[RMDB]
The record gives the reactivity of an RNA of 177 nucleotides to DMS and 2A3.
It was measured as part of the RMDB library M2PK50.
For DMS the reverse transcriptase was MarathonRT.
RNA sequence: GGGAACGACUCGAGUAGAGUCGAAAAAGUUAUGAGUUCGCUCAUAACUACAGCGAAAGGCGCUCGGACCCGCAGUCCGCCGAAGGCAUCCCAGCCAGUCCAAGUUGGUAUAUUUCGAUAUACCAAAGACAUGGUUAAGAUUCGUCUUAACCAUGUCAAAAGAAACAACAACAACAAC
Reactivity to DMS in 0.01 (KOAc 150mM, MgCl2 10mM, bicine 150mM(pH8.5), 24C), signal-to-noise 6, nucleotides 027 to 126: a050g000u000u000a000u000g000a020g010u000u020c260g020c000u000c000a010u000a010a010c000u000a050c090a300g000c020g010a040a060a070g000g010c010g020c040u000c060g020g000a070c040c240c020g010c030a070g000u000c050c020g000c020c010g000a100a080g010g000c100a080u000c000c000c020a140g010c090c090a080g010u000c030c040a100a130g010u000u000g000g000u000a010u000a010u000u000u020c150g020a030u000a000u010a010c000c000a010a030a090
Reactivity to 2A3 in 0.01 (KOAc 150mM, MgCl2 10mM, bicine 150mM(pH8.5), 24C), signal-to-noise 5, nucleotides 027 to 126: a010g010u010u000a000u010g000a000g030u020u140c200g070c070u000c000a000u000a000a000c000u020a020c030a010g040c020g070a140a060a040g060g000c010g010c070u070c080g060g030a050c010c020c030g020c040a010g030u000c010c010g000c000c000g050a030a010g150g040c010a030u020c020c000c000a000g040c020c020a020g010u020c030c020a080a070g110u060u020g010g010u000a000u000a000u010u090u060c140g010a000u000a000u000a000c000c000a020a050a010